[RMDB]
The data come from the RNA Mapping Database (RMDB), library OK2TST. An RNA of 177 nucleotides, treated with 2A3 and read out base by base. For 2A3 the reverse transcriptase was SuperScript II with manganese.
RNA sequence: GGGAACGACUCGAGUAGAGUCGAAAACUCCAUAACAAAACGUCCGGCCACGUGAAUCUAUUUGGAAUUGGUCGGUAAGUUUACGCACUGCACCACUUGUUCCUACUGUAAUCGUGACAUCAUUUAACACCCACUCGUCAUUCGUGACGAGUGGGUGAAAAGAAACAACAACAACAAC
Reactivity to 2A3 in 0.01 (KOAc 150mM, MgCl2 10mM, bicine 150mM(pH8.5), 24C), signal-to-noise 1, nucleotides 027 to 126: c040u020c020c000a010u190a300a130c170a000a120a000a000c010g000u060c020c010g040g040c000c010a020c040g000u040g090a020a090u070c000u080a130u130u120u170g100g010a090a090u080u010g030g020u020c000g000g000u050a000a020g000u000u080u030a040c090g000c020a000c060u050g000c000a000c020c000a050c000u010u040g000u010u000c000c000u060a080c040u080g110u110a050a060u130c010g010u020g060a030c030a040u060c020a020u140u060u060a030a050